[RMDB]
RNA sequence: GGGAACGACUCGAGUAGAGUCGAAAACAACACCCAAGUGUUGGUGCCCUCCAACGUCAACAAACCAGGGUUAUCAGCCAACAGAACCGACGCUGUGUCGGUGACCGCCCGCAGCCGGCCGUAUGCAGGUAAAUGAGGAGUUCGCUCCUCAUUUACCAAAAGAAACAACAACAACAAC
Reactivity to DMS in 0.01 (KOAc 150mM, MgCl2 10mM, bicine 150mM(pH8.5), 24C), signal-to-noise 3, nucleotides 027 to 126: c100a070a120c160a070c010c060c060a070a110g010u020g000u010u000g030g010u000g010c030c010c020u000c070c040a030a080c060g020u000c110a040a110c140a010a110a080c160c100a050g020g000g010u000u010a070u000c100a070g000c020c020a090a050c080a030g000a200a070c000c010g000a040c050g020c190u020g010u010g010u000c020g000g000u000g000a070c090c110g000c030c000c010g000c050a090g010c040c010g000g010c050c020g000u010a040u000g010c120a070
Reactivity to 2A3 in 0.01 (KOAc 150mM, MgCl2 10mM, bicine 150mM(pH8.5), 24C), signal-to-noise 2, nucleotides 027 to 126: c040a010a030c040a070c060c020c040a040a030g100u100g030u110u010g000g030u040g010c000c010c020u010c050c030a070a040c060g110u110c030a060a040c020a100a180a040c030c050a020g000g000g030u040u070a080u090c060a010g080c020c010a010a020c030a100g080a050a050c000c020g020a030c010g070c200u100g100u080g000u300c020g020g000u010g000a040c040c010g010c020c000c000g070c030a020g020c000c000g030g000c010c000g070u120a060u140g050c020a030